[RMDB]
An RNA of 207 nucleotides, treated with 2A3 and read out base by base.
RNA sequence: GGGAACGACUCGAGUAGAGUCGAAAAUGGCUUCUCCUGGGCGAUCGCUCGCUGUUUUUGUGGCUGGCUUUCAGCGGGCUGGAGGAGCCGGGAGCGGAGGCGGAGGACCGAGCCAAGAACGUCAGCCUAUAGAGGAAGCUGUUCGCAGCUUCCUCAACGAGACAUAAAUCUUCGGAUUUAUGUCUCGAAAAGAAACAACAACAACAAC
Reactivity to 2A3 in 0.01 (KOAc 150mM, MgCl2 10mM, bicine 150mM(pH8.5), 24C), signal-to-noise 2, nucleotides 027 to 156: u140g000g010c010u010u010c010u040c000c020u060g010g030g070c030g090a090u080c090g010c070u000c010g000c010u010g070u080u050u030u060u150g110u080g030g000c020u020g020g000c000u030u050u060c010a010g070c000g010g010g000c000u010g030g020a030g000g000a010g000c010c020g010g000g010a040g010c070g000g090a050g040g000c060g030g020a020g020g000a020c020c030g010a000g010c030c030a040a050g040a080a010c070g000u010c010a000g000c010c000u090a130u050a100g000a000g010g000a000a000g000c000u010g000u090u140c230g000c120a000g000c000u000u000c000c000u000c000a000a000

The reactions ran in a buffer of 150 mM KOAc, 10 mM MgCl2 and 150 mM bicine (pH 8.5), at 24 C.